Structure probing data (2A3 and DMS) for a 177-nucleotide construct. Source: RMDB libraries RFM100 and RFMREP, as collected in RNAgym. Conditions: 150 mM KOAc, 10 mM MgCl2 and 150 mM bicine (pH 8.5), 24 C.
RNA sequence: GGGAACGACUCGAGUAGAGUCGAAAAGUCUUGUAACUAGAGAUCCCUCAGACCCUUUUAGUCAGUGUGGAAAAUCUCUAGCAGUGGCGCCCGAAGAGGGACCUGAAAGCGAAAGGGAAACCAGAGACAGAGAGUAGCUAUUCGUAGCUACUCUCUGAAAAGAAACAACAACAACAAC
Reactivity to 2A3 in 0.01 (KOAc 150mM, MgCl2 10mM, bicine 150mM(pH8.5), 24C), signal-to-noise 5, nucleotides 027 to 126: g030u000c010u020u070g070u050a050a050c000u010a000g000a000g000a020u060c010c020c000u010c010a000g000a030c030c010c050u030u180u080u200a020g010u010c040a040g020u020g040u250g050g030a110a160a100a150u000c000u000c000u020a010g000c020a040g020u070g050g010c060g020c010c020c030g020a060a030g060a050g040g020g010a020c000c010u050g060a120a060a020g100c080g050a120a030a050g030g010g000a040a100a060c010c010a020g020a010g020a090
Reactivity to DMS in 0.01 (KOAc 150mM, MgCl2 10mM, bicine 150mM(pH8.5), 24C), signal-to-noise 4, nucleotides 027 to 126: g020u020c010u010u020g000u030a090a220c040u020a020g000a000g010a020u000c010c010c000u010c030a050g010a040c010c180c190u020u060u040u040a100g020u000c010a050g010u010g010u040g020g000a090a060a090a090u000c010u010c010u000a020g010c100a100g020u010g000g030c120g000c020c000c000g000a080a100g000a200g000g000g010a100c020c010u000g000a050a070a080g000c130g020a060a080a110g020g000g000a070a170a170c050c030a070g000a080g020a210